[RMDB]
The record gives the reactivity of an RNA of 207 nucleotides to 2A3 and DMS.
RNA sequence: GGGAACGACUCGAGUAGAGUCGAAAAUGCUGUCGUUGACAGCGCCCAACGCUUCACAACCUGAAAGAAGCGCCUGUUAUCAGGACGGUUGAUCCUUUUACCGGUGCAGACCUCUGCAAACACCGGGUUUAACAAGCAUCUUUCGAGAUGCUUGUAAGUAUACAAACUGCUUCGGCAGUUUGUAUACAAAAGAAACAACAACAACAAC
Reactivity to 2A3 in 0.01 (KOAc 150mM, MgCl2 10mM, bicine 150mM(pH8.5), 24C), signal-to-noise 3, nucleotides 027 to 156: u140g000c010u000g000u030c030g300u120u300g000a000c010a000g000c000g030c000c010c000a050a020c020g010c000u010u010c020a010c000a110a020c000c000u010g000a000a000a000g000a000a010g010c010g080c000c010u110g060u260u150a160u300c010a000g000g000a000c010g000g000u000u000g000a110u050c020c030u020u020u030u060a080c000c000g000g000u020g000c020a030g090a290c030c130u210c050u160g020c000a040a090a010c040a000c010c010g010g000g010u000u130u010a040a000c000a000a000g000c000a000u010c000u000u110u080c140g060a020g000a020u000g000c000u000u000g000u000a000a000
Reactivity to DMS in 0.01 (KOAc 150mM, MgCl2 10mM, bicine 150mM(pH8.5), 24C), signal-to-noise 1, nucleotides 027 to 156: u000g000c010u010g010u000c000g030u020u020g010a010c020a060g000c000g000c050c030c000a090a140c050g000c040u010u000c020a210c070a090a220c050c030u000g000a140a170a300g020a060a020g030c020g040c010c040u000g010u010u000a180u020c040a040g030g020a180c140g030g000u000u010g000a140u000c030c020u030u000u000u000a120c010c020g000g020u010g010c010a110g000a190c180c090u000c140u000g000c070a230a150a000c010a010c000c010g030g010g010u000u000u000a050a050c000a010a020g000c000a000u000c000u030u000u000c260g020a060g000a020u000g020c000u030u000g010u000a010a110

For DMS, 2,271 sequencing reads were counted. It was measured as part of the RMDB library M2RFPK. For 2A3 the reverse transcriptase was SuperScript II with manganese. Reactivities are given for positions 27 through 156. Reactivities are rounded to 0.1 and cut off at 0 and 3. For DMS the reverse transcriptase was MarathonRT.